[RMDB]
RNA sequence: GGGAACGACUCGAGUAGAGUCGAAAAUCGCCAUGAUGACCUUCUCGGACGUACAGCGUGAGUAUCCUCACGUGCUGGAGAUGGUCGACGUGGAACAGUUCACCUUCAGCAACGUCUGUGAAUCGGUAGUUAAAUUCCGGCGGUUAGGCGAGACGGAAGGUCUACAGAAUUUCGAUUCUGUAGACCUAAAAGAAACAACAACAACAAC
Reactivity to 2A3 in 0.01 (KOAc 150mM, MgCl2 10mM, bicine 150mM(pH8.5), 24C), signal-to-noise 3, nucleotides 027 to 156: u010c010g000c010c020a060u140g070a110u140g030a090c000c010u020u010c030u010c030g020g040a030c010g020u120a110c060a070g010c020g000u020g000a010g010u170a160u220c020c050u000c000a000c000g070u060g010c020u010g040g000a010g010a040u100g060g020u090c040g010a010c030g070u170g150g070a160a040c040a050g020u060u060c020a020c010c000u000u010c010a000g000c000a000a030c010g020u000c020u010g050u010g070a030a010u140c020g000g000u040a060g080u130u280a030a050a070u110u010c010c000g020g000c030g040g000u040u030a040g000g000c020g020a010g020a010c060g070g010a040
Reactivity to DMS in 0.01 (KOAc 150mM, MgCl2 10mM, bicine 150mM(pH8.5), 24C), signal-to-noise 3, nucleotides 027 to 156: u010c020g040c010c020a160u000g000a130u010g000a050c000c010u010u000c000u000c000g030g020a080c020g020u000a120c170a300g010c000g030u020g000a070g020u010a190u030c160c010u010c020a000c000g000u000g050c020u020g010g030a040g020a010u010g020g020u000c030g030a030c050g010u000g040g010a120a150c080a180g000u000u000c030a030c010c010u010u010c050a040g020c020a200a050c040g010u000c000u000g040u010g010a040a030u000c090g030g030u000a120g040u010u010a040a080a250u000u000c010c020g010g010c030g020g010u000u010a060g020g010c060g020a090g030a150c060g010g040a080
An RNA of 207 nucleotides, treated with 2A3 and DMS and read out base by base. In probing experiments dimethyl sulfate is read out at A N1 and C N3, which are open when not base-paired. DMS adducts were read by reverse transcription with MarathonRT. The DMS profile rests on 4,899 reads.